Chemical mapping of a 177-nucleotide RNA with DMS and 2A3. For 2A3, 1,793 sequencing reads were counted. As a SHAPE reagent, 2A3 marks flexible, mostly unpaired nucleotides at the ribose 2'-OH. The reactions ran in a buffer of 150 mM KOAc, 10 mM MgCl2 and 150 mM bicine (pH 8.5), at 24 C. Values cover nucleotides 27 to 126.
[RMDB]
RNA sequence: GGGAACGACUCGAGUAGAGUCGAAAACACCGAGUUUGCCUCUAAUUCCUCGGUGUUGUCACUUGUUAACUUCACCGUUGAUCCUCAAAAAGCUUAUCUCGAUUUCGUCAAUGCGGGAGGUGCCCCAGUUUUAUUCCCUGUUCGCAGGGAAUAAAACAAAAGAAACAACAACAACAAC
Reactivity to DMS in 0.01 (KOAc 150mM, MgCl2 10mM, bicine 150mM(pH8.5), 24C), signal-to-noise 2, nucleotides 027 to 126: c030a040c030c010g000a010g020u000u000u020g010c060c020u000c100u010a090a160u000u010c140c000u000c010g010g040u010g010u010u000g000u010c080a090c090u000u000g010u020u010a070a090c050u000u010c060a050c080c080g000u010u000g010a060u000c010c040u020c060a070a080a110a090a130g000c080u000u000a090u020c060u000c020g000a080u000u000u000c130g020u000c090a030a050u010g010c100g020g000g000a100g000g000u000g010c050c020c010c050a120
Reactivity to 2A3 in 0.01 (KOAc 150mM, MgCl2 10mM, bicine 150mM(pH8.5), 24C), signal-to-noise 2, nucleotides 027 to 126: c010a010c000c000g010a000g010u040u080u070g060c020c000u100c030u080a100a150u080u100c020c000u010c000g030g000u010g000u010u000g010u010c020a030c080u060u050g050u140u090a070a030c020u040u030c030a030c050c020g030u010u030g010a050u040c010c010u080c050a100a100a000a000a000g080c030u050u070a070u090c040u020c040g080a060u030u120u070c030g030u000c000a000a050u080g040c030g040g020g000a010g000g040u030g010c000c010c010c010a010